[RMDB]
This 207-nucleotide RNA was probed chemically with 2A3.
RNA sequence: GGGAACGACUCGAGUAGAGUCGAAAAGGGGUCGUGUCUUGGUCCCUAUGAAGACCUAGACAUGAGCUGAAGCCUCCACGGCUCAACAGCUAGGUUGGAGGGAUCAACACGACGGAGGCACCCAAAACGGAAUGGAGGGUUCGCCCUCCAUUCCGAAGUAAACAGCCUUCUUCGGAAGGCUGUUUACAAAAGAAACAACAACAACAAC
Reactivity to 2A3 in 0.01 (KOAc 150mM, MgCl2 10mM, bicine 150mM(pH8.5), 24C), signal-to-noise 1, nucleotides 027 to 156: g080g000g020g000u010c000g000u010g000u000c140u030u010g030g000u020c000c020c000u060a300u010g010a000a010g020a000c020c000u000a010g010a030c110a160u220g010a020g000c000u020g020a060a020g040c000c000u000c000c030a030c030g000g000c010u030c010a050a290c020a080g190c000u000a000g060g000u000u040g030g010a010g000g000g010a010u010c000a000a000c000a000c000g000a000c030g000g000a000g020g000c000a010c000c020c010a070a040a000a010c010g000g000a010a010u000g010g010a000g040g040g050u090u170c250g120c000c000c000u000c000c000a000u000u000c000c000g000a010a000
Notes
For 2A3 the reverse transcriptase was SuperScript II with manganese. Reactivities are given for positions 27 through 156.